[RMDB]
RNA sequence: GGGAACGACUCGAGUAGAGUCGAAAACACAUGCCAUCAUAUCGGUUAAGAACUCUUAACUCUGAUGGCUUUCGAGUUAUGUGCUGCAUUGAAGCUCUCCCUUCAAUUCAACGUACCGUUCCGUCAAGAAAAUGUUAACAUUCGUGUUAACAUUUUCAAAAGAAACAACAACAACAAC
Reactivity to 2A3 in 0.01 (KOAc 150mM, MgCl2 10mM, bicine 150mM(pH8.5), 24C), signal-to-noise 9, nucleotides 027 to 126: c060a000c010a060u150g000c030c000a000u010c000a010u080a070u290c090g020g010u010u010a020a020g080a300a270c080u030c000u300u000a000a000c000u010c030u100g000a000u010g000g000c000u010u020u000c000g000a000g000u090u080a100u180g030u030g040c050u010g010c010a020u020u020g020a010a010g010c030u020c040u090c070c010c000u000u010c010a010a020u040u030c010a070a050c070g020u010a020c010c020g000u000u000c010c010g080u090c060a100a030
Reactivity to DMS in 0.01 (KOAc 150mM, MgCl2 10mM, bicine 150mM(pH8.5), 24C), signal-to-noise 9, nucleotides 027 to 126: c110a090c170a090u000g010c000c000a010u000c000a040u000a100u010c290g000g010u000u000a010a010g010a260a170c300u010c010u000u000a010a010c000u000c100u000g010a010u000g000g000c010u000u000u010c030g010a050g010u000u000a050u010g010u000g010c030u000g010c080a030u000u000g010a020a030g000c100u000c110u010c130c180c000u000u000c030a020a030u000u000c040a040a050c070g010u000a040c050c030g010u000u000c000c010g010u000c090a070a130
Background:
The record gives the reactivity of an RNA of 177 nucleotides to 2A3 and DMS. The reactions ran in a buffer of 150 mM KOAc, 10 mM MgCl2 and 150 mM bicine (pH 8.5), at 24 C.